[RMDB]
RNA sequence: GGGAACGACUCGAGUAGAGUCGAAAAUUUUGGGCAGAUAACAACUGUUACGCGUCUUCCCACUGUAUUGUAAACACUACAACAAAUUUUAAGUUUAAUACACCUACGCGACAAGAUGAAUCGGAAACUGGAUCAUUAGUUUCGACUAAUGAUCCAGAAAAGAAACAACAACAACAAC
Reactivity to 2A3 in 0.01 (KOAc 150mM, MgCl2 10mM, bicine 150mM(pH8.5), 24C), signal-to-noise 2, nucleotides 027 to 126: u110u110u060u080g010g000g020c000a000g030a060u040a080a050c050a150a100c040u100g000u030u050a060c030g040c010g030u000c030u010u010c000c010c000a010c000u020g030u030a000u020u060g080u070a020a070a010c040a010c080u150a020c040a180a030c060a100a250a140u130u180u120u240a120a080g000u040u050u060a070a040u030a010c000a040c000c060u040a010c020g000c030g090a020c020a030a030g060a120u130g060a130a100u110c020g040g130a040a050a050
Reactivity to DMS in 0.01 (KOAc 150mM, MgCl2 10mM, bicine 150mM(pH8.5), 24C), signal-to-noise 2, nucleotides 027 to 126: u000u000u020u010g010g010g000c000a020g010a100u000a070a060c160a080a120c070u000g020u010u010a100c040g020c040g000u000c170u000u000c000c000c000a070c280u000g000u010a040u000u000g020u000a030a030a070c070a040c190u010a030c090a060a120c210a080a060a170u030u040u000u010a000a050g030u000u000u000a040a030u010a010c000a010c120c050u010a030c030g000c020g030a110c140a060a090g000a110u000g000a130a060u000c100g010g050a070a040a090